The data come from the RNA Mapping Database (RMDB), library RFMREP. Structure probing data (DMS and 2A3) for a 177-nucleotide construct. The 2A3 profile rests on 1,408 reads. DMS adducts were read by reverse transcription with MarathonRT. Conditions: 150 mM KOAc, 10 mM MgCl2 and 150 mM bicine (pH 8.5), 24 C.

[RMDB]
RNA sequence: GGGAACGACUCGAGUAGAGUCGAAAAGCGUGGGACCGCGCAGCGGGCGAGGCGCGCCGCGGCAGCCCCGAGGAGAGCGGGCGGGGGCACCGGUACCGGCCGGGGACGGGUGAAACAGGAUGAUCCCGCAUAACAUAUUGUUCGCAAUAUGUUAUGCAAAAGAAACAACAACAACAAC
Reactivity to DMS in 0.01 (KOAc 150mM, MgCl2 10mM, bicine 150mM(pH8.5), 24C), signal-to-noise 2, nucleotides 027 to 126: g010c060g010u000g000g000g000a160c080c020g030c010g030c080a140g000c030g000g000g020c060g020a110g000g000c040g010c040g010c070c020g080c060g010g020c060a090g010c030c010c000c010g000a090g000g000a170g010a060g000c040g010g000g010c080g000g000g000g000g010c060a070c040c030g000g020u000a140c150c080g000g000c040c070g010g020g020g000a110c060g010g020g020u000g010a080a070a070c120a070g010g000a120u000g000a160u000c000c010c000
Reactivity to 2A3 in 0.01 (KOAc 150mM, MgCl2 10mM, bicine 150mM(pH8.5), 24C), signal-to-noise 1, nucleotides 027 to 126: g000c020g030u150g000g040g030a080c000c040g000c000g020c080a060g010c020g010g070g060c070g130a100g060g200c110g000c010g010c060c010g050c000g000g020c000a020g040c000c020c000c030g000a010g000g040a110g020a030g030c110g020g030g010c130g040g000g010g020g000c040a030c030c030g030g000u060a130c050c020g070g000c060c040g020g020g000g000a020c030g000g000g040u030g060a030a050a070c080a010g080g000a020u050g030a050u020c000c000c000
As a SHAPE reagent, 2A3 marks flexible, mostly unpaired nucleotides at the ribose 2'-OH.